This 177-nucleotide RNA was probed chemically with DMS and 2A3. For 2A3 the reverse transcriptase was SuperScript II with manganese. The 2A3 profile rests on 1,270 reads.

[RMDB]
RNA sequence: GGGAACGACUCGAGUAGAGUCGAAAACGUCCUAGUUUCGACUAGGACGAAAUAAAAUCAGCGGUAAAUAAUCGAGGCGUAUUACCGCUGAACGCGUCGAUAAAAUGCGAUGAUUCGUCAUCGCAAAUACUGGCAUGUUGUUCGCAACAUGCCAGUAAAAAGAAACAACAACAACAAC
Reactivity to DMS in 0.01 (KOAc 150mM, MgCl2 10mM, bicine 150mM(pH8.5), 24C), signal-to-noise 1, nucleotides 027 to 126: c000g000u020c000c000u000a000g010u000u000u000c080g000a020c010u000a000g020g000a020c000g000a010a070a030u010a150a060a080a120u000c000a000g000c020g000g050u000a010a040a050u000a030a090u010c100g010a070g000g020c060g030u020a020u000u000a010c000c010g000c000u000g000a010a070c170g090c100g060u000c040g000a070u000a100a070a090a090u000g010c000g000a020u000g000a030u000u000c220g030u010c000a020u000c010g050c000a020a000a080
Reactivity to 2A3 in 0.01 (KOAc 150mM, MgCl2 10mM, bicine 150mM(pH8.5), 24C), signal-to-noise 1, nucleotides 027 to 126: c000g020u040c000c000u000a000g000u040u060u060c130g050a020c000u000a000g020g000a000c000g000a000a010a010u100a000a020a020a130u050c000a000g000c000g000g030u040a080a090a070u090a080a210u160c140g060a100g100g120c050g060u010a000u030u010a000c000c000g030c000u000g000a000a000c030g050c010g090u050c020g000a010u080a140a160a040a010u100g000c040g000a010u020g000a000u000u050c120g050u020c080a000u000c030g000c010a000a000a000